This 177-nucleotide RNA was probed chemically with 2A3 and DMS. The RNA was probed in 150 mM KOAc, 10 mM MgCl2 and 150 mM bicine (pH 8.5) at 24 C. Reactivities are given for positions 27 through 126. The 2A3 profile rests on 1,817 reads. The data come from the RNA Mapping Database (RMDB), library VIROID. For DMS, 1,669 sequencing reads were counted. For DMS the reverse transcriptase was MarathonRT. 2A3 is a SHAPE reagent: it acylates the 2'-hydroxyl of flexible nucleotides of all four kinds.
[RMDB]
RNA sequence: GGGAACGACUCGAGUAGAGUCGAAAAAUUCGGAGGAAUCGUCCUUUAAACGUUCCUCCAAGAGACCAUUCCCCAAACCCUUACUUAUGUAAGAAUGGUUCGGCGAAUGUACCGUUUCGCUCUUUUGCAUUUUUAGUUGGUUCGCCAACUAAAAAUGAAAAGAAACAACAACAACAAC
Reactivity to 2A3 in 0.01 (KOAc 150mM, MgCl2 10mM, bicine 150mM(pH8.5), 24C), signal-to-noise 2, nucleotides 027 to 126: a010u130u120c090g000g010a010g050g050a030a070u300c060g000u050c050c000u240u300u200a210a210a010c000g000u010u010c010c000u000c000c000a030a020g040a010g010a010c030c040a040u000u020c010c040c010c010a000a060a000c050c010c000u060u000a020c010u180u300a060u300g010u000a000a000g100a120a080u160g000g010u050u040c050g020g000c000g000a040a020u020g010u070a100c040c060g050u030u050u080c070g010c030u060c020u100u060u040u130g110
Reactivity to DMS in 0.01 (KOAc 150mM, MgCl2 10mM, bicine 150mM(pH8.5), 24C), signal-to-noise 2, nucleotides 027 to 126: a180u020u000c110g010g010a000g000g010a010a020u030c030g000u020c060c140u010u010u020a090a200a020c010g000u010u010c000c000u000c010c010a050a030g010a070g010a060c100c020a070u000u000c000c100c000c000a040a020a030c020c010c010u000u000a010c000u000u010a170u010g010u010a000a010g020a140a090u000g010g010u000u000c080g000g040c250g000a020a030u000g010u000a110c080c070g000u000u010u000c060g020c130u000c010u000u000u010u010g020